[RMDB]
RNA sequence: GGGAACGACUCGAGUAGAGUCGAAAACAUUACGAAUUCAGUCGCAAAUUGUAGAAUUAGCUACUCUACGAUUUAGUGAGCGUUAGUAUCGUUGUAAUAUAAUAUAGUCUUUGGAAGGAUUAUAUUGGAGCCGCGGACAAGUUCGCUUGUCCGCGAACAUCGCUACAUACUUCGGUAUGUAGCGAUGAAAAGAAACAACAACAACAAC
Reactivity to DMS in 0.01 (KOAc 150mM, MgCl2 10mM, bicine 150mM(pH8.5), 24C), signal-to-noise 1, nucleotides 027 to 156: c070a090u010u000a130c040g010a080a120u000u000c130a160g000u000c030g030c040a040a060a050u010u010g040u000a000g030a020a110u010u010a200g010c180u000a140c070u000c000u000a010c000g010a010u000u000u000a100g030u000g000a030g010c050g010u000u020a140g020u000a070u000c040g000u010u000g010u000a040a110u010a090u000a090a020u000a030u000a020g020u000c010u000u000u010g020g010a300a190g000g000a060u000u010a010u000a030u020u000g020g020a140g010c060c010g040c000g070g060a040c000a010a020g000u020u030c300g040c040u000u000g010u010c030c000g010c010g000a000a040
Reactivity to 2A3 in 0.01 (KOAc 150mM, MgCl2 10mM, bicine 150mM(pH8.5), 24C), signal-to-noise 4, nucleotides 027 to 156: c030a060u150u290a040c070g070a070a120u190u180c080a090g060u030c010g000c010a010a000a000u000u010g000u010a010g010a030a040u070u040a080g020c030u070a020c010u000c000u010a000c000g010a010u010u000u090a060g010u030g040a060g060c020g010u060u110a040g020u040a070u120c070g000u000u040g010u030a090a120u100a090u020a170a010u000a000u000a010g020u000c040u070u140u140g180g020a120a030g020g000a010u000u000a000u000a000u010u040g060g040a070g110c070c010g000c020g000g010a000c000a000a000g000u040u110c110g030c170u000u000g000u010c010c000g000c000g000a000a010
Structure probing data (DMS and 2A3) for a 207-nucleotide construct. For 2A3, 2,114 sequencing reads were counted. It was measured as part of the RMDB library M2RFPK. Values are in units of 0.01, from 0 to 300, in steps of 10. DMS adducts were read by reverse transcription with MarathonRT.